[RMDB]
This 177-nucleotide RNA was probed chemically with 2A3. Conditions: 150 mM KOAc, 10 mM MgCl2 and 150 mM bicine (pH 8.5), 24 C.
RNA sequence: GGGAACGACUCGAGUAGAGUCGAAAACUAGAACUUAGUGAACCUGCUAUUCUGGUGCACAAGCCAGAGUCUUCCAUUGGGAAGCGAAGACCCCGUAGAGUUUUACUGCAGUCUGUCGUUGAAGCUUCGAAGGGUUUAAUUUCGAUUAAACCCUUCGAAAAGAAACAACAACAACAAC
Reactivity to 2A3 in 0.01 (KOAc 150mM, MgCl2 10mM, bicine 150mM(pH8.5), 24C), signal-to-noise 2, nucleotides 027 to 126: c040u050a010g060a070a010c020u010u020a020g010u010g010a010a010c000c000u000g040c010u060a050u100u020c000u000g070g000u080g040c210a080c100a300a000g000c000c000a000g000a000g000u030c000u000u000c010c010a120u080u190g210g090g020a070a020g020c050g040a030a000g050a030c000c000c040c070g020u020a000g020a020g050u000u000u050u180a020c010u010g050c030a010g010u020c040u000g050u020c030g000u000u020g030a100a000g050c030u010u000
The 2A3 profile rests on 891 reads.